[RMDB]
RNA sequence: GGGAACGACUCGAGUAGAGUCGAAAACCCCGCACCUUCGGGUGCGGGGAACUACCGUGAAUGCGACUCGGUAUAUACGCAAAACCCUUGGAAACAAGGGAAUUCACGAACAGUUCGCUGUUCGUAACAUGGACGAAUGAUUCGUCAUUCGUCCAUGAAAAGAAACAACAACAACAAC
Reactivity to DMS in 0.01 (KOAc 150mM, MgCl2 10mM, bicine 150mM(pH8.5), 24C), signal-to-noise 2, nucleotides 027 to 126: c000c000c020c010g060c010a020c000c010u000u000c270g020g010g100u030g010c010g010g000g010g000a000a010c140u000a140c010c010g020u010g020a060a100u000g000c050g030a140c080u000c010g010g020u000a030u010a060u010a080c170g010c090a060a080a100a100c000c000c000u010u000g000g000a070a090a200c000a020a010g010g000g000a020a010u010u000c150a100c010g010a020a010c000a000g030u000u000c180g010c000u000g000u010u000c000g010u000a040a090
Reactivity to 2A3 in 0.01 (KOAc 150mM, MgCl2 10mM, bicine 150mM(pH8.5), 24C), signal-to-noise 1, nucleotides 027 to 126: c010c020c070c000g040c000a000c000c000u100u070c300g180g000g010u020g000c080g000g000g020g030a010a050c010u020a020c000c000g030u000g140a290a040u180g040c080g120a080c030u010c050g030g030u000a030u020a000u000a260c110g040c060a120a110a060a220c000c000c000u040u000g000g000a060a020a040c000a020a010g020g000g030a000a040u050u080c060a000c000g000a000a010c000a000g040u110u120c220g020c110u010g000u000u010c000g000u010a010a050
Structure probing data (DMS and 2A3) for a 177-nucleotide construct. Source: RMDB library M2PK50, as collected in RNAgym. For DMS the reverse transcriptase was MarathonRT. Conditions: 150 mM KOAc, 10 mM MgCl2 and 150 mM bicine (pH 8.5), 24 C.